[RMDB]
RNA sequence: GGGAACGACUCGAGUAGAGUCGAAAACUACAAAGGGGGCCCUGUCCGCACACAUAUCUAUCAACUGUCGUUGAUCAUAUUCGAAUGCGGUUUUGAAUUUUGCUAGGGGGUGAUAAUCCCCGAGAUCCCCGAAUGCACCACGUAUGGACCAUUGGGCCUAACUACCCGUGUUCGCACGGGUAGUUAGAAAAGAAACAACAACAACAAC
Reactivity to 2A3 in 0.01 (KOAc 150mM, MgCl2 10mM, bicine 150mM(pH8.5), 24C), signal-to-noise 1, nucleotides 027 to 156: c030u080a050c090a040a090a040g030g040g010g000g040c000c000c000u000g050u040c000c010g000c000a020c000a000c000a030u020a010u080c050u120a020u010c020a000a060c010u180g160u300c130g020u130u000g000a020u050c000a000u080a010u040u120c040g050a110a010u030g000c010g000g060u010u040u060u080g020a010a030u130u150u040u100g000c000u050a010g000g030g000g000g000u000g000a010u060a250a070u060c020c010c000c000g000a000g000a010u060c040c000c000c000g040a070a000u070g000c020a020c050c000a010c020g020u030a130u120g050g050a080c050c000a070u100u200g000g020g000c000
Reactivity to DMS in 0.01 (KOAc 150mM, MgCl2 10mM, bicine 150mM(pH8.5), 24C), signal-to-noise 2, nucleotides 027 to 156: c050u000a130c050a060a060a150g000g040g040g060g010c000c020c000u010g020u000c010c010g010c010a040c030a110c110a010u000a010u000c060u020a100u000c010a020a030c010u000g070u000c160g020u010u000g000a060u000c300a030u000a040u000u010c100g030a050a090u000g010c030g000g010u000u010u000u000g010a130a160u000u000u010u000g010c050u000a120g000g000g010g030g010u000g000a110u000a100a080u000c010c000c000c050g000a090g010a100u000c010c010c000c020g040a050a040u000g020c030a090c010c060a090c070g020u010a100u010g000g010a040c040c040a200u000u010g000g000g000c030

Chemical mapping of a 207-nucleotide RNA with 2A3 and DMS. It was measured as part of the RMDB library OK3TST.